Structure probing data (2A3 and DMS) for a 177-nucleotide construct. For 2A3, 870 sequencing reads were counted. The DMS profile rests on 1,970 reads.
RNA sequence: GGGAACGACUCGAGUAGAGUCGAAAAGAAACACUAGCGCCCAGGAAGAAAAACCAAAACGUGAACUACUUGACGCAACACGAACGCUGGUGUAAUUCGUCAAGAAAGAAAAAGAAAAGAAAGAAAACCCUAUAUACGGUUUCGACCGUAUAUAGGGAAAAGAAACAACAACAACAAC
Reactivity to 2A3 in 0.01 (KOAc 150mM, MgCl2 10mM, bicine 150mM(pH8.5), 24C), signal-to-noise 1, nucleotides 027 to 126: g000a000a020a000c050a000c010u010a000g070c000g050c000c000c180a000g010g050a070a070g080a000a110a020a040a050c050c030a090a120a100a050c080g050u100g070a040a060c050u110a000c000u140u090g010a000c030g030c060a000a100c000a080c010g040a140a000c110g000c000u060g010g010u020g000u000a000a050u040u120c030g000u010c000a010a000g070a000a110a010g090a080a160a060a040a000g080a040a220a020a000g120a010a050a000g100a060a140a050a040
Reactivity to DMS in 0.01 (KOAc 150mM, MgCl2 10mM, bicine 150mM(pH8.5), 24C), signal-to-noise 2, nucleotides 027 to 126: g000a150a140a050c020a060c000u000a000g000c010g000c040c010c080a050g010g010a070a160g050a060a030a040a300a020c090c090a080a030a130a080c070g050u000g000a120a130c070u000a090c000u000u000g020a010c010g000c230a000a000c030a000c050g030a080a080c050g000c060u000g040g020u020g040u000a040a050u010u010c010g020u000c000a000a050g000a210a110a050g000a020a090a070a010a050g000a150a090a060a080g010a090a070a000g050a080a070a110a050

Reactivities are given for positions 27 through 126. DMS (dimethyl sulfate) methylates the pairing face of unpaired adenines and cytosines.